[RMDB]
RNA sequence: GGGAACGACUCGAGUAGAGUCGAAAAAAUUUAGAAUAUCCAGGUGUAGCGGUGAAAUUCGUAGAGAUCUGGUGGAUAAUGAACCGGUGGCGAAGGCGAAAGAUAACCGCUGAAAUGCUGAAGUGAAUGACCAACAAAUAUUCGUAUUUGUUGGUCAAAAAGAAACAACAACAACAAC
Reactivity to DMS in 0.01 (KOAc 150mM, MgCl2 10mM, bicine 150mM(pH8.5), 24C), signal-to-noise 3, nucleotides 027 to 126: a050a050u000u000u010a090g000a120a070u000a110u000c020c020a100g010g010u010g020u010a060g000c000g010g000u000g000a090a140a050u000u000c010g010u000a130g010a120g000a140u000c020u000g010g030u010g000g010a140u010a070a080u010g020a140a020c010c020g000g020u000g000g010c300g010a070a180g000g000c010g010a020a020a040g000a060u000a130a050c020c020g020c010u000g000a070a030a080u000g000c030u010g010a040a120g030u010g000a060a140
The data come from the RNA Mapping Database (RMDB), library M2PK90. Structure probing data (DMS) for a 177-nucleotide construct. Values cover nucleotides 27 to 126.